RNA sequence: GGGAACGACUCGAGUAGAGUCGAAAAGGCCCAUUUCGAUGGGCCGCAGCAACCUUUGUGCAGCGACGAUCAUGGGAUCGUCGCGGUUCCCAUUGGGAACCGACCCGACGACCCAUGGGAGCUGCACUCUGGUACAAUUUUUGACUUCGGUCAAAAAAUUGUGAUACUCAUUCGUGAGUAUCACAAUAAAAGAAACAACAACAACAAC
Reactivity to DMS in 0.01 (KOAc 150mM, MgCl2 10mM, bicine 150mM(pH8.5), 24C), signal-to-noise 2, nucleotides 027 to 156: g020g030c020c020c000a070u010u000u000c220g000a040u000g020g080g040c010c020g020c060a060g010c080a090a090c010c020u040u000u010g000u020g030c030a040g000c000g040a120c180g000a070u020c000a100u010g010g020g010a110u000c010g040u000c010g010c010g010g010u000u000c000c040c010a250u000u000g080g030g010a010a020c010c010g010a020c180c050c060g000a030c010g000a300c000c000c010a030u000g010g020g010a140g030c000u000g000c000a000c000u000c000u000g000g050u000a120c080a100a120u000u000u000u000u000g020a040c010u000u000c300g060g010u000c000a000a010a000a050a140
Reactivity to 2A3 in 0.01 (KOAc 150mM, MgCl2 10mM, bicine 150mM(pH8.5), 24C), signal-to-noise 3, nucleotides 027 to 156: g010g000c000c000c020a020u090u130u080c230g100a010u000g000g010g000c000c020g000c020a030g050c020a020a070c010c000u010u010u000g010u020g000c010a000g010c000g130a230c020g020a180u010c010a010u010g020g010g170a300u020c000g000u000c000g000c000g000g000u000u000c050c000c030a260u220u300g010g000g000a010a000c000c000g080a110c050c070c030g000a000c000g000a000c000c000c000a000u000g010g000g000a010g000c000u000g000c000a000c000u000c000u000g000g010u050a050c080a100a150u010u040u020u030u060g000a010c000u020u010c250g000g000u000c000a000a000a000a040a010
The record gives the reactivity of an RNA of 207 nucleotides to DMS and 2A3. For DMS, 4,409 sequencing reads were counted. Source: RMDB library RNAMAK, as collected in RNAgym. The reactions ran in a buffer of 150 mM KOAc, 10 mM MgCl2 and 150 mM bicine (pH 8.5), at 24 C.